[RMDB]
RNA sequence: GGGAACGACUCGAGUAGAGUCGAAAAGAUAUGGAUCAUCAGCAGCAACAGCUAUAUGUCGGAAACGACAUGAUAGACAUGCUGGAUGAUCCUAAGUCAAAGUUCAGCAGGUUCGCCUGCUGAACAACUUACGGUGUUACUUCGGUAACACCGUAAGAAAAGAAACAACAACAACAAC
Reactivity to 2A3 in 0.01 (KOAc 150mM, MgCl2 10mM, bicine 150mM(pH8.5), 24C), signal-to-noise 2, nucleotides 027 to 126: g000a020u010a010u060g000g010a000u010c010a000u000c020a020g300c010a010g000c040a140a120c050a300g000c010u000a010u000a000u030g010u000c010g000g000a000a010a010c010g010a000c000a000u050g160a020u020a000g050a060c210a230u300g000c010u000g030g000a010u000g010a000u020c000c000u000a000a000g010u000c020a230a100a010g020u020u010c000a000g000c030a010g000g070u090u160c250g140c090c000u010g010c000u000g000a000a000c000a000a000
Reactivity to DMS in 0.01 (KOAc 150mM, MgCl2 10mM, bicine 150mM(pH8.5), 24C), signal-to-noise 3, nucleotides 027 to 126: g000a020u000a020u020g000g000a010u000c000a000u000c000a130g030c050a030g030c100a230a180c200a170g010c010u000a010u000a010u000g010u000c000g020g000a020a010a040c000g000a020c000a000u010g030a020u010a010g020a040c080a070u000g020c000u000g010g010a000u000g010a010u000c000c000u000a010a050g000u000c010a200a100a160g000u000u000c000a010g030c010a010g000g000u000u000c300g020c000c000u000g000c000u000g010a010a010c010a070a090